[RMDB]
RNA sequence: GGGAACGACUCGAGUAGAGUCGAAAAGGACAUAUCUGAAAUAGGUACAAAGGAAUAAUGAGAAGGUAAAAAUGCAUAAAUAAACUAGAUAUAGAUAUAUUCUGGAACAAAAGAAAGCUCUUCUCUUGCCAUCAGGGUAGAAGGAUCCUAGAAUUAACACGUAGUAAAAUUUCGAUUUUACUACGUGAAAAGAAACAACAACAACAAC
Reactivity to DMS in 0.01 (KOAc 150mM, MgCl2 10mM, bicine 150mM(pH8.5), 24C), signal-to-noise 1, nucleotides 027 to 156: g020g040a170c030a170u010a100u010c070u000g010a090a110a060u000a080g030g010u010a070c040a050a050a020g010g000a100a100u000a020a090u020g000a090g000a040a090g000g020u000a030a010a040a030a010u000g010c030a100u000a030a030a080u000a020a020a140c010u040a030g020a230u000a290u000a110g010a290u000a100u000a030u000u000c000u000g010g040a170a060c000a000a010a050a110g020a070a050a230g000c260u010c070u010u000c020u000c000u000u000g040c020c010a100u010c080a020g000g000g000u000a000g010a060a110g010g000a130u000c040c030u000a080g000a050a100u000u000a110a190
Reactivity to 2A3 in 0.01 (KOAc 150mM, MgCl2 10mM, bicine 150mM(pH8.5), 24C), signal-to-noise 1, nucleotides 027 to 156: g010g000a010c010a050u180a080u070c040u020g050a090a120a000u110a060g000g010u050a040c050a030a070a000g030g000a030a030u050a010a040u170g070a000g010a090a020g000g000u030a040a030a020a020a000u300g000c000a000u010a060a060a000u010a020a100a000c060u040a020g040a050u220a080u090a200g020a000u180a020u040a090u300u030c000u000g000g060a080a040c060a020a090a010a010g120a120a130a030g040c020u000c000u080u000c000u000c000u040u060g020c010c010a080u140c040a040g010g010g050u000a010g040a120a000g060g000a020u030c080c030u060a080g010a020a000u080u000a030a010